[RMDB]
RNA sequence: GGGAACGACUCGAGUAGAGUCGAAAAACGGUCAUUACGAUGACCGAUAUAGCGGCACGUGGCAAAGGUGCUGCGAUGCGCCGCGUUAAAUCGUAUCACAGUUCUUUGUCACCUUUUGCUUCACAAAUUGUUGUUAAAACUUCGGUUUUAACAACAAAAAAGAAACAACAACAACAAC
Reactivity to DMS in 0.01 (KOAc 150mM, MgCl2 10mM, bicine 150mM(pH8.5), 24C), signal-to-noise 6, nucleotides 027 to 126: a110c010g010g010u000c000a010u000u010a110c230g010a050u000g000a000c010c000g000a030u010a030u010a070g010c060g000g010c100a090c300g010u000g000g020c000a000a020a010g000g010u020g000c000u000g010c070g010a000u010g010c010g000c230c110g010c230g020u030u020a080a110a110u000c010g000u010a020u000c010a020c010a010g000u000u010c000u010u000u000g000u000c010a000c000c080u010u010u030u010g000c020u010u010c090a050c160a060a060a120
Reactivity to 2A3 in 0.01 (KOAc 150mM, MgCl2 10mM, bicine 150mM(pH8.5), 24C), signal-to-noise 4, nucleotides 027 to 126: a010c000g000g000u020c010a010u030u050a050c240g150a030u020g010a000c000c000g010a020u060a000u050a150g060c080g010g000c010a020c070g020u010g000g000c000a000a050a000g070g030u170g050c000u010g010c010g000a000u030g000c000g030c020c050g160c000g030u010u110a050a130a050u100c010g010u030a010u010c030a010c020a040g000u030u000c000u030u050u010g000u010c010a010c000c000u060u210u190u160g000c000u090u150c060a040c060a100a160a140